[RMDB]
RNA sequence: GGGAACGACUCGAGUAGAGUCGAAAAGCCGUAAAAGCAUCCGGCGAAUAAGAUGCAUGAGCGAAAGCUCUAAGAUAAUUGGCCGUUUUGUAGGGGCCGUAGAACCUACUUAUUAAUGCUCGAGAUGUGUGGAGCGAUCAUCACGCAAGACUAACAACGAUUAUGGCAUAUUCGUAUGCCAUAAUCGAAAAGAAACAACAACAACAAC
Reactivity to 2A3 in 0.01 (KOAc 150mM, MgCl2 10mM, bicine 150mM(pH8.5), 24C), signal-to-noise 4, nucleotides 027 to 156: g010c010c000g000u030a100a040a050a040g020c000a010u000c020c000g000g000c010g010a080a050u110a070a050g010a020u040g010c040a060u110g010a000g000c010g040a100a000a020g000c000u000c020u010a060a040g040a100u130a150a110u170u080g020g000c010c010g040u010u050u040u050g050u030a030g010g000g000g010c010c000g020u010a030g040a060a000c000c010u000a010c010u040u040a070u080u150a150a090u140g000c020u010c070g050a070g020a170u070g030u020g030u040g060g020a030g030c000g020a060u060c020a030u060c010a010c040g020c050a050a060g060a120c030u140a140a030c070a050a030
Reactivity to DMS in 0.01 (KOAc 150mM, MgCl2 10mM, bicine 150mM(pH8.5), 24C), signal-to-noise 3, nucleotides 027 to 156: g060c030c020g030u010a050a090a080a100g010c000a060u010c060c030g020g040c010g010a090a120u010a060a080g030a110u010g010c050a190u010g020a000g030c000g010a120a130a300g020c000u010c010u000a060a120g000a150u000a090a180u000u000g000g010c020c020g000u000u000u000u000g050u000a050g010g000g000g020c030c070g000u000a030g020a110a140c020c010u000a090c020u000u010a090u000u020a100a070u000g040c000u000c020g010a120g030a090u000g030u000g010u000g000g010a140g000c010g010a050u010c060a090u000c060a050c030g040c000a050a060g000a300c030u010a060a070c030a100a250
Notes
Source: RMDB library OK3TST, as collected in RNAgym. This 207-nucleotide RNA was probed chemically with 2A3 and DMS. For 2A3, 3,468 sequencing reads were counted. Values cover nucleotides 27 to 156.